Overview
Structure probing data (2A3) for a 177-nucleotide construct. It was measured as part of the RMDB library RFM100.

RNA sequence: GGGAACGACUCGAGUAGAGUCGAAAAUCUGCAGUGUUCUAUUGUGGAUUGCUUGUGUGCUGGCAGGCUACUACUGGUAAGAAUGGCUAGUGUCAGCAGGGAUGGCUCCUCUCUGGGUUCCAUCUCAGGGCUUCAUGUUGUUCGCAACAUGAAGCCCAAAAGAAACAACAACAACAAC
Reactivity to 2A3 in 0.01 (KOAc 150mM, MgCl2 10mM, bicine 150mM(pH8.5), 24C), signal-to-noise 1, nucleotides 027 to 126: u050c000u010g000c000a020g000u020g110u300u180c030u140a020u030u000g030u000g000g000a060u000u120g000c000u150u070g090u060g000u000g190c040u000g000g000c000a000g020g010c000u020a000c050u050a020c000u020g210g070u120a070a070g110a270a110u100g000g000c000u000a090g190u020g000u040c000a000g070c020a000g100g000g080a000u030g000g000c000u000c000c000u030c000u050c040u060g030g000g000u030u000c000c000a000u000c070u000c050a010